Chemical mapping of a 177-nucleotide RNA with DMS and 2A3. Conditions: 150 mM KOAc, 10 mM MgCl2 and 150 mM bicine (pH 8.5), 24 C. DMS adducts were read by reverse transcription with MarathonRT. 2A3 adducts were read by reverse transcription with SuperScript II with manganese.

RNA sequence: GGGAACGACUCGAGUAGAGUCGAAAACUGUCCAGGGCGUGGAACGGGGAACAUGUGUACCGGACCGGCAGCUACGCUGGCCGGGUGCGCCCUCUGAAGGAGGGUGCAAAGCCGACAGCCGUCGCAACUAGUGUCCAGACUUCGGUCUGGACACUAGAAAAGAAACAACAACAACAAC
Reactivity to DMS in 0.01 (KOAc 150mM, MgCl2 10mM, bicine 150mM(pH8.5), 24C), signal-to-noise 2, nucleotides 027 to 126: c070u020g010u000c060c030a080g000g010g010c030g070u010g000g000a120a150c070g000g000g000g000a110a080c110a060u040g020u000g050u000a060c060c000g000g000a140c000c020g030g010c050a080g010c020u070a030c110g000c000u010g000g000c030c000g040g010g040u010g010c000g010c000c000c030u000c000u010g010a160a170g000g000a060g000g000g070u030g000c000a000a020a130g010c020c010g000a160c060a060g030c050c060g000u050c070g000c090a160a170
Reactivity to 2A3 in 0.01 (KOAc 150mM, MgCl2 10mM, bicine 150mM(pH8.5), 24C), signal-to-noise 2, nucleotides 027 to 126: c010u040g030u050c020c010a070g030g050g000c080g020u170g000g050a120a040c040g000g000g010g040a050a000c060a100u110g060u020g050u090a180c010c010g000g040a070c010c010g010g040c030a050g040c040u040a010c100g000c000u000g060g030c000c010g020g000g000u000g000c000g010c000c050c010u000c000u020g120a230a090g140g000a000g000g000g000u000g000c000a030a020a000g090c020c020g010a030c000a010g000c030c000g020u030c040g000c030a050a020